[RMDB]
Chemical mapping of a 177-nucleotide RNA with 2A3 and DMS. For DMS the reverse transcriptase was MarathonRT. In probing experiments dimethyl sulfate is read out at A N1 and C N3, which are open when not base-paired. The reactions ran in a buffer of 150 mM KOAc, 10 mM MgCl2 and 150 mM bicine (pH 8.5), at 24 C.
RNA sequence: GGGAACGACUCGAGUAGAGUCGAAAAAUGCAAGACUUGAAUACGUCGGAUACAAGCUUGGAGAGCCUGCAUUUGAUGUUCGCGAAUGCAAACUACGAGGGCUAACUUACUCAGCUCCUCUAAGAGACUCCCCUGAUAGUUUCGACUAUCAGGGGAGAAAAGAAACAACAACAACAAC
Reactivity to 2A3 in 0.01 (KOAc 150mM, MgCl2 10mM, bicine 150mM(pH8.5), 24C), signal-to-noise 1, nucleotides 027 to 126: a000u050g000c030a030a000g110a300c040u020u030g030a060a000u200a150c010g030u060c070g050g030a030u070a030c010a010a010g010c000u030u060g050g080a130g010a020g110c020c010u010g000c020a050u000u000u060g000a030u130g130u160u180c100g000c040g010a010a000u060g000c020a110a000a000c070u120a050c030g050a000g000g010g000c000u010a010a090c060u170u300a080c070u050c100a000g000c030u160c070c000u010c040u090a060a020g070a010g060a060
Reactivity to DMS in 0.01 (KOAc 150mM, MgCl2 10mM, bicine 150mM(pH8.5), 24C), signal-to-noise 2, nucleotides 027 to 126: a110u010g000c020a070a040g010a190c070u000u010g020a170a130u000a060c060g040u000c110g010g000a180u040a080c050a060a020g000c000u000u010g000g020a170g000a140g000c010c020u000g000c020a010u000u000u000g000a050u000g030u000u000c110g000c030g000a120a040u010g000c020a040a080a060c060u000a130c200g000a040g010g000g000c010u010a040a100c150u030u000a080c230u040c150a000g000c020u010c040c040u000c000u000a100a100g000a150g010a200